[RMDB]
RNA sequence: GGGAACGACUCGAGUAGAGUCGAAAAAAAAAAGGGUCUCUUACUACGUCAAGCUCACCCCUGCUUGUGACCAGUCAAAUAGAUAAGAGAGGACCUGGAAUUAACCUUUUUCGGAAAGUGCAGGGGAAAUAUCGUUUGGGUUCGCCCAAACGAUAUUAAAAGAAACAACAACAACAAC
Reactivity to DMS in 0.01 (KOAc 150mM, MgCl2 10mM, bicine 150mM(pH8.5), 24C), signal-to-noise 1, nucleotides 027 to 126: a000a000a050a000a200a210g020g000g000u010c010u010c030u010u000a040c060u000a080c210g000u000c040a030a020g010c040u030c050a210c000c030c000c000u000g040c000u000u010g040u000g000a080c010c100a030g000u020c150a090a070a130u000a100g010a060u010a020a080g000a020g010a040g010g000a070c070c020u000g030g010a100a110u020u010a060a050c040c000u010u000u000u000u000c150g000g000a070a090a120g040u010g020c030a030g030g000g030g010a050
The data come from the RNA Mapping Database (RMDB), library OK2TRN. Chemical mapping of a 177-nucleotide RNA with DMS.